Source information
This 177-nucleotide RNA was probed chemically with DMS. The DMS profile rests on 8,386 reads. For DMS the reverse transcriptase was MarathonRT. Values cover nucleotides 27 to 126.

RNA sequence: GGGAACGACUCGAGUAGAGUCGAAAAGAUAUGGAACCUGAACUACUCGGCACGCGAGAGGACUAUCUAGACGGAUCGGAAACGAUCCGUCUAGACGAAUCCUCUCGUCGAGCAGGUUCCUAAGUCACCAUCUAGUUAAGUUCGCUUAACUAGAUGGAAAAGAAACAACAACAACAAC
Reactivity to DMS in 0.01 (KOAc 150mM, MgCl2 10mM, bicine 150mM(pH8.5), 24C), signal-to-noise 7, nucleotides 027 to 126: g010a030u010a300u010g000g000a000a010c010c000u010g000a110a070c100u020a300c010u000c000g010g010c130a220c300g030c110g010a010g000a010g000g000a030c080u000a230u000c000u000a000g000a020c000g010g000a010u000c000g000g000a120a100a200c000g000a010u000c000c000g000u000c000u000a000g000a000c130g010a090a160u000c000c000u000c000u000c000g040u000c010g000a020g000c010a010g000g010u000u000c000c000u000a000a040g000u000c040a300